[RMDB]
RNA sequence: GGGAACGACUCGAGUAGAGUCGAAAAAGAAUAGUUUUCGAACUAUUCUCACGACGACCUUGGGAAACCCUGAGGCGCGAUCCCACGCGAUGGUCUGUUCGAACACCUGGUUGUUCGCAACCAGGAAUCUGUGGCAUAAAUUCGUUUAUGCCACAGAAAAAGAAACAACAACAACAAC
Reactivity to 2A3 in 0.01 (KOAc 150mM, MgCl2 10mM, bicine 150mM(pH8.5), 24C), signal-to-noise 2, nucleotides 027 to 126: a000g000a000a030u020a010g010u020u020u060u170c210g030a020a000c010u020a010u000u000c000u010c000a050c010g150a030c020g190a240c030c020u020u000g030g030g040a210a300a120c060c020c020u030g040a020g000g000c000g000c000g010a030u040c000c020c000a020c030g050c040g160a130u130g010g080u060c060u080g110u120u090c010g060a070a000c050a030c090c010u020g030g000u000u020g020u070u000c250g010c080a000a010c020c000a000g000g040a000a010
Reactivity to DMS in 0.01 (KOAc 150mM, MgCl2 10mM, bicine 150mM(pH8.5), 24C), signal-to-noise 2, nucleotides 027 to 126: a030g010a040a010u000a010g010u000u010u000u000c150g010a030a040c000u010a000u000u000c000u000c090a150c060g010a120c010g000a140c030c000u000u010g000g040g010a160a100a090c220c020c010u000g000a050g040g000c030g000c000g000a130u000c000c000c000a130c090g010c060g010a040u010g000g000u000c050u010g020u000u000c070g000a080a120c230a120c000c000u000g000g010u010u000g010u000u000c150g010c010a010a020c000c000a010g000g010a040a020
Structure probing data (2A3 and DMS) for a 177-nucleotide construct. Source: RMDB library M2PK50, as collected in RNAgym. The RNA was probed in 150 mM KOAc, 10 mM MgCl2 and 150 mM bicine (pH 8.5) at 24 C. Values are in units of 0.01, from 0 to 300, in steps of 10.